The record gives the reactivity of an RNA of 177 nucleotides to 2A3 and DMS.
Conditions: 150 mM KOAc, 10 mM MgCl2 and 150 mM bicine (pH 8.5), 24 C.
It was measured as part of the RMDB library OK2TRN.
Values are in units of 0.01, from 0 to 300, in steps of 10.
RNA sequence: GGGAACGACUCGAGUAGAGUCGAAAAGGCAUCAUGUUGCGUAACUCACCCAGCACAGUCUUGGCGAUGCUGGCCACGGUCAAGUGCGGCGCUAUCGCCGGCAUGCUCAACUACCACCAGCGCGGCGGUAGUCCGGGUAGUUCGCUACCCGGACUACAAAAGAAACAACAACAACAAC
Reactivity to 2A3 in 0.01 (KOAc 150mM, MgCl2 10mM, bicine 150mM(pH8.5), 24C), signal-to-noise 1, nucleotides 027 to 126: g060g000c000a070u100c060a060u170g080u170u120g040c060g040u060a070a080c010u010c010a070c040c000c000a000g060c020a010c010a030g030u090c030u130u200g020g020c020g070a020u040g000c150u040g210g000c000c000a060c060g010g090u120c070a110a090g060u050g120c040g030g000c020g010c100u090a030u200c030g000c000c000g000g000c020a010u070g060c000u000c030a070a140c040u060a110c000c000a020c000c000a010g000c010g000c010g040g100c000g050
Reactivity to DMS in 0.01 (KOAc 150mM, MgCl2 10mM, bicine 150mM(pH8.5), 24C), signal-to-noise 2, nucleotides 027 to 126: g020g000c050a040u000c060a080u020g030u020u010g020c040g040u010a080a050c130u020c110a190c050c030c020a100g000c050a090c080a110g020u010c020u000u020g020g020c000g010a140u020g000c080u000g020g000c060c040a070c040g000g000u010c130a070a090g010u000g000c000g010g010c020g020c080u000a090u000c020g040c000c010g020g000c010a130u000g000c060u010c060a110a060c050u000a070c030c080a130c030c010a070g020c040g000c070g010g030c040g000